[RMDB]
RNA sequence: GGGAACGACUCGAGUAGAGUCGAAAAGGCGGCCCCACGUGGGAGGGCCGUCGCUCAACGGAUAAAAGGUACUCCGGGGAUAACAGGCUGAUCUUGCCCAAGAGUCCACAUCGACGGCAAGGUUUGGCAAGAUACCAAUGUUCGCAUUGGUAUCUUGAAAAGAAACAACAACAACAAC
Reactivity to DMS in 0.01 (KOAc 150mM, MgCl2 10mM, bicine 150mM(pH8.5), 24C), signal-to-noise 9, nucleotides 027 to 126: g010g000c000g000g010c010c000c010c020a080c200g020u010g020g000g020a160g000g010g010c000c000g010u000c010g010c040u010c020a120a130c130g010g000a060u020a080a070a110a100g010g010u010a070c120u000c030c030g010g010g000g000a090u020a070a090c150a080g000g000c010u000g010a010u000c010u000u000g000c000c000c020a040a300g000a030g000u020c050c060a040c080a210u000c000g000a300c300g000g000c000a010a020g000g010u000u010u010g010g000
Reactivity to 2A3 in 0.01 (KOAc 150mM, MgCl2 10mM, bicine 150mM(pH8.5), 24C), signal-to-noise 6, nucleotides 027 to 126: g010g000c000g000g010c000c000c020c000a110c150g150u180g040g070g020a080g000g000g000c000c000g000u000c010g010c010u030c010a060a070c030g030g000a020u100a140a170a050a060g140g040u060a070c030u000c020c010g020g010g010g010a020u040a180a070c030a080g140g000c010u020g000a020u010c000u000u010g010c000c000c010a020a020g020a010g030u100c060c020a070c010a110u020c010g030a030c010g010g010c010a000a000g010g020u030u050u070g010g000